[RMDB]
RNA sequence: GGGAACGACUCGAGUAGAGUCGAAAAGUCUGUCUACGGACAGACAACGAACUCUUCGGAGUUCGAGACCAGCUACGGCUGGUCAGGUGCGCUACGGCGCACCAGGAGUUCGUGAGAACUCCAAGGCACCAUUGCACUCCGGUGCCAGUUGACGAGGUGGGGUUUAUCGAGAUUUCGGCGGAUGACUCCCGGUUGUUCAUCACAACCGCAAGCUUUUACUUAAAUCAUUAAGGUGACUUAGUGGACAAAGGUGAAAGUGUGAUGAUAGAUGCGUGUUCGCACGCAUCAAAAGAAACAACAACAACAAC
Reactivity to DMS in 0.01 (KOAc 150mM, MgCl2 10mM, bicine 150mM(pH8.5), 24C), signal-to-noise 1, nucleotides 027 to 266: g000u000c000u010g000u000c010u000a140c210g050g020a020c000a000g000a000c000a030a150c000g010a020a000c000u000c000u020u020c120g010g030a000g000u010u020c000g000a180g010a030c010c000a000g000c000u000a070c230g020g000c040u000g000g010u010c020a000g070g040u000g020c010g130c010u000a100c190g040g040c000g060c040a010c010c000a040g010g000a010g040u000u000c010g000u020g000a150g010a020a010c000u000c000c010a080a150g010g010c010a000c000c000a110u000u020g000c140a120c160u010c140c150g020g000u000g000c000c010a080g010u010u000g010a070c090g010a100g010g030u010g030g000g030g000u000u000u000a020u000c070g030a180g020a150u020u010u000c110g000g010c100g010g000a050u010g000a020c050u000c000c080c020g000g010u000u000g000u000u000c000a000u000c000a020c000a010a000c020c030g000c100a060a060g030c000u000u000u000u010a010c000u010u000a030a170a070u070c000a020u000u000a000a000g010g010u030g000a180c000u000u010a010g000u010g000g000a040c090a060a130a100g000g000u030g010a000a030a010g010u000g010u000g000a000u000g000a050u030a140
Reactivity to 2A3 in 0.01 (KOAc 150mM, MgCl2 10mM, bicine 150mM(pH8.5), 24C), signal-to-noise 3, nucleotides 027 to 266: g000u000c000u000g010u000c000u010a050c300g050g000a000c010a000g010a000c000a000a010c000g000a000a000c000u010c010u050u130c280g110g010a010g010u000u010c000g000a000g000a010c000c000a010g000c010u010a040c250g140g020c000u010g000g000u000c000a000g010g000u040g000c020g010c020u060a060c300g150g000c000g080c000a000c000c010a000g000g000a000g000u020u040c020g030u110g090a140g000a040a010c000u000c010c000a030a070g010g000c010a000c020c000a050u090u300g120c100a090c110u080c060c130g000g000u000g010c000c010a020g110u140u230g050a080c090g050a040g050g110u080g020g020g000g010u020u140u120a110u090c100g060a100g020a240u080u200u150c080g110g090c040g100g040a030u060g010a030c030u020c000c000c000g010g000u010u000g010u030u020c010a010u010c000a000c000a000a000c000c030g060c090a000a000g010c000u020u020u020u000a010c010u060u100a020a070a050u070c000a010u010u000a010a010g000g020u080g040a020c000u020u010a010g000u010g030g050a050c080a050a270a030g010g010u020g010a010a000a000g030u050g020u000g000a000u000g000a010u020a040
Source: RMDB library POS240, as collected in RNAgym. The record gives the reactivity of an RNA of 307 nucleotides to DMS and 2A3. For DMS, 2,533 sequencing reads were counted. DMS adducts were read by reverse transcription with MarathonRT. The RNA was probed in 150 mM KOAc, 10 mM MgCl2 and 150 mM bicine (pH 8.5) at 24 C. 2A3 adducts were read by reverse transcription with SuperScript II with manganese.